[RMDB]
RNA sequence: GGGAACGACUCGAGUAGAGUCGAAAAAGGGUCAUCCUACUCACUGGUCUACCCUAGUGUCGCCUGACCUACGGUCCUUGACCUACAGUGGCUGAGGCCUACAGUAGGGACGAUGAGUUUUGGACCAGUCGAAGGGCUGAUUCGUCAGCCCUUCGACAAAAGAAACAACAACAACAAC
Reactivity to 2A3 in 0.01 (KOAc 150mM, MgCl2 10mM, bicine 150mM(pH8.5), 24C), signal-to-noise 3, nucleotides 027 to 126: a000g090g000g050u080c000a070u140c010c040u060a040c000u040c070a050c010u050g030g010u090c060u050a140c000c000c060u020a060g080u020g010u140c030g040c020c060u090g090a130c010c000u030a060c090g010g080u140c030c080u050u090g040a040c000c000u040a020c060a160g060u040g020g080c000u060g090a070g010g090c000c010u040a050c030a040g030u010a010g000g090g020a050c060g030a060u180g000a010g090u030u030u080u050g030g000a030c020c000a020
Reactivity to DMS in 0.01 (KOAc 150mM, MgCl2 10mM, bicine 150mM(pH8.5), 24C), signal-to-noise 1, nucleotides 027 to 126: a000g010g000g000u000c000a040u000c050c060u000a010c090u000c000a070c080u000g000g000u000c020u000a230c140c090c040u000a000g000u130g020u020c050g030c060c000u020g000a110c140c040u040a000c190g080g000u000c000c040u000u000g020a240c030c000u030a020c100a190g080u020g000g000c030u060g000a220g000g000c000c060u000a060c140a050g020u050a020g000g030g020a030c120g010a020u010g000a140g020u030u050u000u010g000g000a050c050c000a030

Overview
Structure probing data (2A3 and DMS) for a 177-nucleotide construct. The data come from the RNA Mapping Database (RMDB), library OK1LIB. For DMS the reverse transcriptase was MarathonRT. For DMS, 1,034 sequencing reads were counted. 2A3 adducts were read by reverse transcription with SuperScript II with manganese. Conditions: 150 mM KOAc, 10 mM MgCl2 and 150 mM bicine (pH 8.5), 24 C. Values cover nucleotides 27 to 126.